RNA sequence: GGGAACGACUCGAGUAGAGUCGAAAAUCCACGUCCUUCGGGACGUGGAAAAUACGGCACGGGAGCCGAAGAAAUCCCGAAGCGCAGUGCAGCGCAGCAGAAAAAGGUGAGUCUUCGGACUCACCAAGUAUCUUAAUAACUUCGGUUAUUAAGAUACAAAAGAAACAACAACAACAAC
Reactivity to 2A3 in 0.01 (KOAc 150mM, MgCl2 10mM, bicine 150mM(pH8.5), 24C), signal-to-noise 7, nucleotides 027 to 126: u010c000c000a000c000g000u010c010c000u020u100c170g090g000g000a000c000g000u020g000g010a010a000a010a000u070a010c000g000g000c020a010c040g030g020g020a020g030c040c050g060a050a030g110a030a060a010u010c010c000c010g000a150a050g010c010g000c030a060g110u200g130c060a080g000c040g000c010a010g050c040a020g210a050a080a020a030a000g000g000u000g000a000g000u000c010u040u130c240g070g000a000c000u000c000a000c000c000a000a000
Reactivity to DMS in 0.01 (KOAc 150mM, MgCl2 10mM, bicine 150mM(pH8.5), 24C), signal-to-noise 6, nucleotides 027 to 126: u000c000c000a010c010g010u000c000c000u000u020c220g030g010g010a010c000g040u010g010g000a010a010a060a080u010a200c030g000g010c020a130c050g010g010g010a080g020c010c000g000a090a140g000a030a080a080u000c000c000c000g020a150a120g000c020g020c010a150g010u010g020c200a080g010c010g010c010a110g010c180a100g000a050a090a050a100a090g000g000u000g000a020g000u000c000u000u020c180g020g000a020c000u000c000a000c010c000a010a030
Chemical mapping of a 177-nucleotide RNA with 2A3 and DMS.